[RMDB]
RNA sequence: GGGAACGACUCGAGUAGAGUCGAAAAGGAAAAAACGUCCUGGCUGGCUUGCCUGAGCGCGCCGCAGCGCUUAAAAAUGCUCGCGGAACUGAUGCAGUGGGAGGCGACCGAUUGAAGCCAAUUGCAGACUAUACCUGUACUUCGGUACAGGUAUAGUAAAAGAAACAACAACAACAAC
Reactivity to 2A3 in 0.01 (KOAc 150mM, MgCl2 10mM, bicine 150mM(pH8.5), 24C), signal-to-noise 7, nucleotides 027 to 126: g050g030a050a060a020a010a020a020c060g070u040c000c000u010g030g010c020u030g030g030c030u050u100g060c000c020u050g030a060g020c040g000c020g020c010c010g020c010a000g000c010g020c000u040u030a070a050a020a000a000u050g010c000u040c090g000c010g000g020a070a030c050u100g030a140u110g010c030a040g040u110g040g050g010a050g010g000c010g020a050c000c030g110a120u040u190g080a070a010g020c010c000a040a050u090u110g030c040a030g010
Reactivity to DMS in 0.01 (KOAc 150mM, MgCl2 10mM, bicine 150mM(pH8.5), 24C), signal-to-noise 7, nucleotides 027 to 126: g010g000a000a040a070a070a080a120c140g000u010c020c010u000g010g010c050u010g000g000c060u000u010g020c030c020u010g000a160g010c050g000c100g020c040c030g010c020a050g020c010g010c020u010u000a010a050a070a130a170u010g010c010u010c130g020c000g010g000a090a090c110u020g000a110u020g020c030a050g010u010g000g010g010a080g000g010c020g000a080c060c050g010a130u010u020g010a080a080g020c020c030a080a070u020u010g020c120a090g000